Chemical mapping of a 177-nucleotide RNA with DMS and 2A3. For DMS the reverse transcriptase was MarathonRT. Source: RMDB libraries RFM100 and RFMREP, as collected in RNAgym. The RNA was probed in 150 mM KOAc, 10 mM MgCl2 and 150 mM bicine (pH 8.5) at 24 C. Values cover nucleotides 27 to 126.
RNA sequence: GGGAACGACUCGAGUAGAGUCGAAAAGUAGUUACGAGGCGUAGUAUUAUGAAGUGUGUGUAAAGAGCAUACUGAAGUACUGGAGGGCAAGUCUGGUGCCAGCAGCCGCGGUAAUACCAGCUCCAGUAUGAUAAGACUGCUUCGGCAGUCUUAUCAUAAAAGAAACAACAACAACAAC
Reactivity to DMS in 0.01 (KOAc 150mM, MgCl2 10mM, bicine 150mM(pH8.5), 24C), signal-to-noise 3, nucleotides 027 to 126: g000u010a040g020u000u000a080c070g000a080g010g040c020g000u020a040g010u010a030u000u000a070u020g020a140a040g010u010g000u010g010u000g010u010a140a100a170g010a250g000c000a000u010a010c020u000g010a110a100g000u000a010c000u000g000g000a080g000g010g010c080a040a080g000u040c020u000g000g020u000g010c000c020a070g010c050a140g000c100c050g000c060g000g000u000a060a080u030a150c010c000a020g010c090u000c000c010a090g000u010
Reactivity to 2A3 in 0.01 (KOAc 150mM, MgCl2 10mM, bicine 150mM(pH8.5), 24C), signal-to-noise 2, nucleotides 027 to 126: g020u040a010g000u040u060a060c030g020a000g000g040c060g020u070a000g020u000a080u280u010a030u210g150a090a140g010u030g000u000g000u020g000u140a130a130a000g100a000g020c000a000u060a090c010u070g060a030a010g000u010a020c000u000g030g010a030g040g000g040c090a140a000g050u030c020u000g000g000u000g030c020c020a040g000c000a010g020c010c080g000c020g000g040u080a040a040u000a110c000c000a000g020c010u070c000c000a040g000u040